Source information
An RNA of 207 nucleotides, treated with 2A3 and DMS and read out base by base. The DMS profile rests on 6,512 reads. The RNA was probed in 150 mM KOAc, 10 mM MgCl2 and 150 mM bicine (pH 8.5) at 24 C. DMS adducts were read by reverse transcription with MarathonRT.
RNA sequence: GGGAACGACUCGAGUAGAGUCGAAAAUGCUAGAGUGAGUGUGCAUUACUACCUGUACUCUAAUGAUAAUGUAAUUGUAGGAUCCAUGUUUACAAUAUGUAGUCCAAACUCUCAAGGAUUUAAAGGCAGAUUAUGCUGGGUGGAAAAGGAGGGAGCAUGAUGUAGAGCUAUUCGUAGCUCUACAUCAAAAAGAAACAACAACAACAAC
Reactivity to 2A3 in 0.01 (KOAc 150mM, MgCl2 10mM, bicine 150mM(pH8.5), 24C), signal-to-noise 3, nucleotides 027 to 156: u110g020c050u060a040g000a000g100u060g010a040g010u130g040u010g030c030a060u080u090a080c030u040a050c010c060u060g040u070a070c000u040c060u130a100a070u160g050a050u050a130a050u170g070u110a070a050u130u050g060u050a040g000g070a030u000c070c040a030u100g010u050u120u010a060c050a040a010u040a060u250g040u090a040g020u010c030c000a030a020a080c060u040c000u030c080a070a070g020g010a060u030u080u210a060a100a000g000g000c010a010g040a160u150u010a020u140g050c040u010g000g020g000u090g020g050a030a030a040a020g040g020a020g010g010g010a010g000c050a050
Reactivity to DMS in 0.01 (KOAc 150mM, MgCl2 10mM, bicine 150mM(pH8.5), 24C), signal-to-noise 3, nucleotides 027 to 156: u000g010c060u000a050g010a070g010u030g020a120g040u000g000u010g000c040a070u000u000a120c060u000a050c060c020u010g010u000a090c070u000c040u000a080a130u000g020a080u020a080a100u010g010u000a060a130u000u000g030u000a080g000g020a090u000c050c080a060u020g010u000u010u000a030c070a060a080u000a040u000g040u000a060g020u010c050c030a070a060a100c030u000c020u000c030a050a300g000g020a070u000u000u010a040a070a050g010g000c010a020g000a110u000u000a090u010g000c000u000g020g000g040u020g010g010a030a070a060a080g010g010a090g000g000g020a070g020c060a130